Source information:
The record gives the reactivity of an RNA of 177 nucleotides to 2A3 and DMS. For DMS, 4,008 sequencing reads were counted. The 2A3 profile rests on 4,979 reads. The data come from the RNA Mapping Database (RMDB), library TTRDEL.
[RMDB]
RNA sequence: GGGAACGACUCGAGUAGAGUCGAAAAGAUAUGGAUUAAGCGAGCGUGCGGUCGGAAACGACCGGACGCGAUGAGCUUACUGUCCUAAGUCAAAACUUUGAUGCUCGGUUCGCCGAGCAUCAAAGAACGUUUUAAGAAUGUUCGCAUUCUUAAAACGAAAAGAAACAACAACAACAAC
Reactivity to 2A3 in 0.01 (KOAc 150mM, MgCl2 10mM, bicine 150mM(pH8.5), 24C), signal-to-noise 1, nucleotides 027 to 126: g030a000u100a040u170g030g000a020u060u060a020a000g020c040g030a040g020c000g020u210g040c010g040g010u000c000g020g000a090a050a040c000g000a000c010c000g020g030a010c040g020c060g000a020u030g020a010g000c000u020u020a050c070u150g010u000c000c020u030a120a010g040u020c040a020a020a150a260c020u040u000u000g000a000u010g000c010u000c020g000g100u110u120c250g030c120c000g000a000g000c000a010u000c000a010a000a000g000a010a000
Reactivity to DMS in 0.01 (KOAc 150mM, MgCl2 10mM, bicine 150mM(pH8.5), 24C), signal-to-noise 4, nucleotides 027 to 126: g000a040u000a300u010g010g010a040u000u000a020a010g010c010g000a210g000c010g050u000g010c010g010g000u000c000g010g010a100a070a190c010g020a020c000c000g010g000a010c000g010c000g010a040u000g000a210g000c010u000u000a020c300u010g010u000c000c000u000a060a100g010u010c040a070a060a120a170c000u010u000u000g000a020u000g000c000u000c000g000g010u000u020c280g020c000c000g000a010g010c010a000u000c010a000a010a010g010a080a140